[RMDB]
RNA sequence: GGGAACGACUCGAGUAGAGUCGAAAAGUCAUUAAUUACAAGGAUAUCGAAAUACUAAGCACUGUGGAAUAUCUUAAACACGCUGAUAUUGUCGGCAAACCAUUACCUAACGCCUCAAUGCAUUACCGCUUAGUAAUUGAUGAAUAUGAUACCAUCGCUAGUAGUUCCCGUUCGCGGGAACUACUAGAAAAGAAACAACAACAACAAC
Reactivity to 2A3 in 0.01 (KOAc 150mM, MgCl2 10mM, bicine 150mM(pH8.5), 24C), signal-to-noise 1, nucleotides 027 to 156: g010u020c000a000u020u080a090a030u110u030a060c050a050a080g040g010a040u030a010u110c070g050a000a090a000u090a090c050u070a080a030g000c060a030c190u080g020u000g050g090a060a020u170a010u220c030u120u100a180a010a000c110a000c060g000c050u040g010a060u020a020u080u070g000u000c070g070g000c010a000a090a120c040c000a040u060u080a050c090c050u050a070a050c070g000c000c000u010c030a000a120u000g020c010a020u070u150a140c010c070g000c000u020u000a000g020u010a030a040u130u010g010a000u000g010a000a060u130a010u050g020a000u050a240c000c000a030u090c040g000
Structure probing data (2A3) for a 207-nucleotide construct. As a SHAPE reagent, 2A3 marks flexible, mostly unpaired nucleotides at the ribose 2'-OH. The RNA was probed in 150 mM KOAc, 10 mM MgCl2 and 150 mM bicine (pH 8.5) at 24 C. Reactivities are given for positions 27 through 156.